Structure probing data (2A3 and DMS) for a 177-nucleotide construct.

[RMDB]
RNA sequence: GGGAACGACUCGAGUAGAGUCGAAAAUCAUCGUUCUUCGGAACGAUGAAGUAUAACGCGGGCUCCGGACACAGGCGUAGCUGGCCUGGGAUAGUGACAGUAUGGGGCAAACUUUCGAGUUUGCCAAGAGUACGAAGGAUUUCGAUCCUUCGUACUCAAAAGAAACAACAACAACAAC
Reactivity to 2A3 in 0.01 (KOAc 150mM, MgCl2 10mM, bicine 150mM(pH8.5), 24C), signal-to-noise 2, nucleotides 027 to 126: u020c010a000u000c000g000u010u000c000u030u010c200g050g020a000a000c000g020a010u010g000a000a000g000u040a130u050a230a040c030g010c040g030g020g010c010u010c040c010g080g000a040c030a000c010a080g060g000c030g030u040a060g030c040u070g040g000c010c010u010g010g020g030a090u100a050g100u050g070a020c040a020g090u130a140u210g120g020g000g010c010a010a000a000c030u120u070u010c200g090a000g000u000u000u030g000c000c000a000a050
Reactivity to DMS in 0.01 (KOAc 150mM, MgCl2 10mM, bicine 150mM(pH8.5), 24C), signal-to-noise 4, nucleotides 027 to 126: u000c010a010u000c000g000u000u000c000u010u020c200g040g010a010a010c000g000a000u000g000a000a070g000u020a100u010a110a070c120g000c050g010g010g010c030u010c030c020g000g010a110c090a070c080a040g010g010c050g010u000a080g010c070u010g000g010c010c010u010g000g000g010a080u010a070g010u000g000a050c110a100g010u010a060u000g020g010g000g020c000a010a010a010c010u000u000u020c200g010a020g010u000u000u000g010c010c010a020a050

The RNA was probed in 150 mM KOAc, 10 mM MgCl2 and 150 mM bicine (pH 8.5) at 24 C.
It was measured as part of the RMDB library M2PK50.